[RMDB]
RNA sequence: GGGAACGACUCGAGUAGAGUCGAAAAGAUAUGGACCGAAGCUAGCUGUUGUCGGAAACGACAAUACAGCUUGGACCUUCGUCCUAAGUCAAAGUAGGCGGUAUACCUUCGGGUAUACCGCCUACAACAGUUGCCUAAUGUUCGCAUUAGGCAACUGAAAAGAAACAACAACAACAAC
Reactivity to DMS in 0.01 (KOAc 150mM, MgCl2 10mM, bicine 150mM(pH8.5), 24C), signal-to-noise 2, nucleotides 027 to 126: g010a040u000a300u000g030g000a000c100c030g000a030a000g020c010u000a010g000c050u000g000u000u010g000u000c000g000g010a060a140a190c010g000a000c010a030a100u010a110c010a010g000c000u000u000g030g000a190c300c020u000u000c020g010u010c010c010u000a050a080g020u000c040a030a130a110g020u000a010g000g000c000g010g000u000a000u000a010c010c010u000u010c120g010g000g000u000a000u010a020c000c000g000c000c000u010a000c000a030a150